[RMDB]
RNA sequence: GGGAACGACUCGAGUAGAGUCGAAAAUCUGAUCUGCUGCUAAAUCAGAGAGCUUUGCGCCCACUGAGCAACCUCUGUGGGAAGGGCCUGGUAUCGCUGCAUACAGUGGUGAAUCUGGCUGUAUGUCGCUGGAGCGAGCUUUCGAGCUCGCUCCAGCAAAAGAAACAACAACAACAAC
Reactivity to 2A3 in 0.01 (KOAc 150mM, MgCl2 10mM, bicine 150mM(pH8.5), 24C), signal-to-noise 1, nucleotides 027 to 126: u050c000u000g010a060u050c050u080g000c010u000g040c030u140a030a030a030u140c000a010g020a040g010a040g130c000u000u070u150g020c040g070c040c000c000a000c010u040g030a020g000c170a000a030c150c060u050c000u000g030u020g020g000g000a000a130g040g000g000c000c000u010g040g000u140a020u110c040g040c050u150g000c000a050u060a070c060a030g000u000g080g040u060g160a110a160u260c080u150g050g060c040u000g040u020a000u040g060u000c050